[RMDB]
RNA sequence: GGGAACGACUCGAGUAGAGUCGAAAAGUGAGAAUGUUCGCAUUCUCACAAAUAAUUUCAGCGGUUUAAAUUAGCUCCGCAUAACCGCUGAUGCGGAGCUAAAAAGCUUGCCGUUCGCGGCAAGCAACAUAUCUCCACUCUUCGGAGUGGAGAUAUGAAAAGAAACAACAACAACAAC
Reactivity to DMS in 0.01 (KOAc 150mM, MgCl2 10mM, bicine 150mM(pH8.5), 24C), signal-to-noise 2, nucleotides 027 to 126: g020u000g010a010g000a010a000u000g020u010u030c240g020c000a030u000u010c000u000c010a000c000a060a070a080u020a090a080u020u000u010c040a040g010c060g020g000u000u000u020a040a090a160u000u000a010g000c000u000c010c000g030c010a020u000a090a080c070c030g010c070u000g000a020u000g000c000g020g000a020g010c020u000a000a010a070a140a040g010c010u000u000g000c000c000g050u000u010c200g040c000g000g010c000a010a010g030c010a040a040
Reactivity to 2A3 in 0.01 (KOAc 150mM, MgCl2 10mM, bicine 150mM(pH8.5), 24C), signal-to-noise 2, nucleotides 027 to 126: g000u000g000a000g000a000a010u030g040u060u070c150g000c080a010u000u020c000u010c010a010c000a000a000a000u010a000a020u000u140u080c020a020g030c020g060g090u090u180u210a070a210a140u130u020a060g000c010u000c000c000g030c000a010u030a060a040c030c000g010c060u020g010a000u000g000c010g000g000a000g000c000u000a020a000a000a000a020g010c020u010u010g000c000c010g060u030u040c240g020c000g030g040c000a000a010g010c000a000a020